[RMDB]
RNA sequence: GGGAACGACUCGAGUAGAGUCGAAAAUGGACUUUUUACAGUUCCUACUUAUCCGGUUUUAACGCUGUUUUAUUGGCGCAAAGGUUUACGGAUAGACAACUAAUAAUUAAACCUUUUGUGUGCGAAAAUUGGACGUUUAGGUUCGCCUAAACGUCAACCCCUACGUUAGGUUCGCCUAACGUAGGGGAAAAGAAACAACAACAACAAC
Reactivity to 2A3 in 0.01 (KOAc 150mM, MgCl2 10mM, bicine 150mM(pH8.5), 24C), signal-to-noise 1, nucleotides 027 to 156: u060g000g060a040c040u050u120u000u060u300a040c090a030g030u020u090c010c000u080a130c030u130u020a010u010c020c010g060g000u010u000u100u130a080a120c060g000c000u060g190u190u150u030u140a110u100u150g060g000c010g000c000a020a050a020g000g010u000u000u030a000c030g000g000a000u000a030g100a040c050a110a000c050u290a080a210u120a180a000u230u200a010a010a000c000c000u000u000u110u140g090u020g050u020g000c100g120a120a030a000a160u200u110g130g000a000c000g000u000u000u000a040g000g000u000u000c180g130c000c000u000a000a000a000c000g000u000c000a000a000